Conditions: 150 mM KOAc, 10 mM MgCl2 and 150 mM bicine (pH 8.5), 24 C.
An RNA of 177 nucleotides, treated with 2A3 and read out base by base.
The 2A3 profile rests on 1,023 reads.
It was measured as part of the RMDB library M2PK50.
[RMDB]
RNA sequence: GGGAACGACUCGAGUAGAGUCGAAAAGGCGUAGCGUUCGCGCUACGCCAAAUGAGCAUGUACAAAUGGCCAAAGUACAUGCGAAAUAUAAGAGGCCAUAAAAAACCACUUAGUUCGCUAAGUGGAAGUACAAUACCCGGUUCGCCGGGUAUUGUACAAAAGAAACAACAACAACAAC
Reactivity to 2A3 in 0.01 (KOAc 150mM, MgCl2 10mM, bicine 150mM(pH8.5), 24C), signal-to-noise 1, nucleotides 027 to 126: g000g000c010g030u000a000g010c010g020u030u040c280g000c000g000c110u000a000c000g030c030c000a000a010a000u000g000a000g010c020a010u030g000u000a000c010a020a110a100u090g000g000c040c000a040a000a040g010u000a000c020a000u000g040c000g000a030a300a000u300a010u060a140a130g130a170g120g000c000c000a010u070a010a120a010a010a000a010c000c010a000c000u020u010a000g020u010u010c180g030c220u000a000a000g000u000g010g000a020a010